Record summary: The record gives the reactivity of an RNA of 177 nucleotides to 2A3 and DMS. For 2A3 the reverse transcriptase was SuperScript II with manganese. As a SHAPE reagent, 2A3 marks flexible, mostly unpaired nucleotides at the ribose 2'-OH. For DMS, 7,378 sequencing reads were counted. DMS adducts were read by reverse transcription with MarathonRT.
RNA sequence: GGGAACGACUCGAGUAGAGUCGAAAAAAGUGAUUAUUCGUAAUCACUUCACGCCGGGCGCGGUGGCGCCUGCCUGUAGUCCCAGCUACUCGGGAGGCUAAACGACGUACCCGUUCGCGGGUACGAAAGAACAUUACACUUUCGAGUGUAAUGUUCUAAAAGAAACAACAACAACAAC
Reactivity to 2A3 in 0.01 (KOAc 150mM, MgCl2 10mM, bicine 150mM(pH8.5), 24C), signal-to-noise 3, nucleotides 027 to 126: a000a010g010u020g010a010u020u040a020u050u110c170g040u060a020a000u000c010a000c000u080u050c100a100c070g040c050c030g010g040g000c040g010c010g010g160u060g130g030c020g000c000c000u000g090c000c010u060g020u060a010g040u000c020c010c000a010g050c010u040a040c020u040c080g010g000g010a030g000g030c000u080a100a100a010c060g090a000c020g030u000a000c010c010c010g000u020u030c250g000c010g020g000g020u000a000c000g010a010a000
Reactivity to DMS in 0.01 (KOAc 150mM, MgCl2 10mM, bicine 150mM(pH8.5), 24C), signal-to-noise 5, nucleotides 027 to 126: a010a010g010u000g000a020u000u000a030u000u010c170g030u000a010a010u000c000a010c000u000u010c100a110c130g010c140c010g010g000g010c030g020c020g010g020u010g000g010c040g000c010c010u000g010c040c020u000g010u000a050g010u000c030c020c020a170g010c030u000a040c020u010c150g000g010g000a100g010g000c040u010a040a070a070c130g000a220c020g000u000a010c000c010c000g020u000u010c200g020c020g030g000g000u000a000c000g000a020a060